An RNA of 207 nucleotides, treated with 2A3 and read out base by base. The reactions ran in a buffer of 150 mM KOAc, 10 mM MgCl2 and 150 mM bicine (pH 8.5), at 24 C.
RNA sequence: GGGAACGACUCGAGUAGAGUCGAAAAUACUUAAGUUCAGUUUCUGCUUCAGUAAAAAAGGAAUAAUAUUUGCCUAACAGCAAUAGUAGCAAAUAUUAUUAGGCAUUUAUAGUAUAAGUUAACAUAACUUACAAGGGAUGUUAUAAGAAAUUAAAUAACUACACGACUGAUUCGUCAGUCGUGUAGUAAAAGAAACAACAACAACAAC
Reactivity to 2A3 in 0.01 (KOAc 150mM, MgCl2 10mM, bicine 150mM(pH8.5), 24C), signal-to-noise 1, nucleotides 027 to 156: u060a000c000u030u000a020a000g000u010u020c090a010g000u030u000u020c020u000g080c020u050u050c060a000g000u040a000a110a180a110a040a000g190g000a030a000u020a010a000u000a000u010u010u020g000c000c010u060a110a080c080a020g260c110a190a200u130a180g060u030a000g020c000a010a020a010u020a000u020u000a000u020u020a030g040g000c030a050u010u090u000a130u160a060g030u010a040u080a240a080g000u000u000a090a140c020a020u140a060a050c060u000u060a030c020a020a050g060g010g000a000u000g030u050u100a200u080a190a090g030a080a040a040u040u190a020a020a170u060a030
It was measured as part of the RMDB library OK3TST.